[RMDB]
RNA sequence: GGGAACGACUCGAGUAGAGUCGAAAAGACAUUGUAACGUCGCUUGCUUCAGGUAUGCCAAUCUGGCUGGUUGCGGUGCAGCAGGGCGGGCAAAUCAAGGAUAGCUUCGGCGGCUUGAGCAAUACGUUUAAGGUGUUGUUGAGCUACAUCAACCCGCCAAAUGCGUGAGGUUCGCCUCACGCAUUUGAAAAGAAACAACAACAACAAC
Reactivity to DMS in 0.01 (KOAc 150mM, MgCl2 10mM, bicine 150mM(pH8.5), 24C), signal-to-noise 1, nucleotides 027 to 156: g020a090c030a070u000u000g010u000a030a050c110g030u000c010g060c030u000u000g020c040u000u000c000a070g060g000u000a040u010g040c030c070a110a100u000c050u000g010g010c000u000g010g040u000u000g040c090g040g020u000g080c050a040g030c030a000g020g000g040c150g030g050g000c000a040a160a070u000c080a120a140g010g010a150u000a070g000c010u000u020c050g010g030c080g000g050c030u020u010g000a090g000c010a030a090u000a000c050g000u000u010u000a030a190g000g020u030g010u000u000g000u000u000g020a050g050c090u000a100c070a100u000c120a050a130c000c000c000g040c120
Reactivity to 2A3 in 0.01 (KOAc 150mM, MgCl2 10mM, bicine 150mM(pH8.5), 24C), signal-to-noise 2, nucleotides 027 to 156: g030a010c050a050u040u120g060u110a150a040c050g020u020c020g020c120u100u040g020c030u000u090c080a010g080g000u080a090u200g010c000c000a000a070u060c090u080g110g000c020u050g020g060u040u040g040c020g010g060u080g020c000a000g000c000a020g060g030g030c110g020g000g000c000a050a050a090u070c020a070a030g100g020a120u090a060g000c000u080u140c090g060g000c010g020g040c030u090u110g010a010g000c000a010a000u060a080c060g060u100u110u260a030a030g000g030u010g030u000u000g000u020u000g020a000g040c020u080a050c000a010u170c010a030a080c000c000c000g000c000